[RMDB]
RNA sequence: GGGAACGACUCGAGUAGAGUCGAAAAGGAAACGCCCAGGAGGCAGCGGCGACGGCGCAGCCUGGGACUGCCAGGAGCGCCGGGCGGGAAGCGGCCUGUGGCCGCCUGGCCUCUGACACGAGGCUGGCAAUUAGUUUGUAUUCGUACAAACUAAUUGAAAAGAAACAACAACAACAAC
Reactivity to DMS in 0.01 (KOAc 150mM, MgCl2 10mM, bicine 150mM(pH8.5), 24C), signal-to-noise 9, nucleotides 027 to 126: g010g000a080a090a110c160g010c020c000c010a100g010g000a050g010g020c040a060g010c040g000g010c010g010a160c020g000g000c000g020c010a140g010c010c000u000g000g000g010a130c160u040g010c010c000a020g000g000a250g010c010g010c000c010g000g000g010c010g000g010g010a100a100g000c030g010g000c010c010u010g010u030g020g020c010c100g010c040c010u010g010g010c000c000u000c010u000g000a130c220a100c180g000a020g000g000c000u000g000g000
Reactivity to 2A3 in 0.01 (KOAc 150mM, MgCl2 10mM, bicine 150mM(pH8.5), 24C), signal-to-noise 9, nucleotides 027 to 126: g090g010a090a070a010c060g010c000c010c010a020g030g030a030g030g030c060a040g020c040g070g000c010g020a050c020g010g020c010g000c020a070g070c010c010u020g040g020g150a300c080u110g100c010c000a010g010g010a010g000c000g000c000c010g000g020g000c020g020g030g040a090a010g070c020g030g040c000c030u140g040u210g030g000c010c000g020c000c010u030g030g000c010c000u000c010u030g060a010c000a010c150g010a010g010g000c010u000g010g000

Chemical mapping of a 177-nucleotide RNA with DMS and 2A3. It was measured as part of the RMDB libraries RFM100 and RFMREP. 2A3 adducts were read by reverse transcription with SuperScript II with manganese. Values are in units of 0.01, from 0 to 300, in steps of 10. 2A3 is a SHAPE reagent: it acylates the 2'-hydroxyl of flexible nucleotides of all four kinds.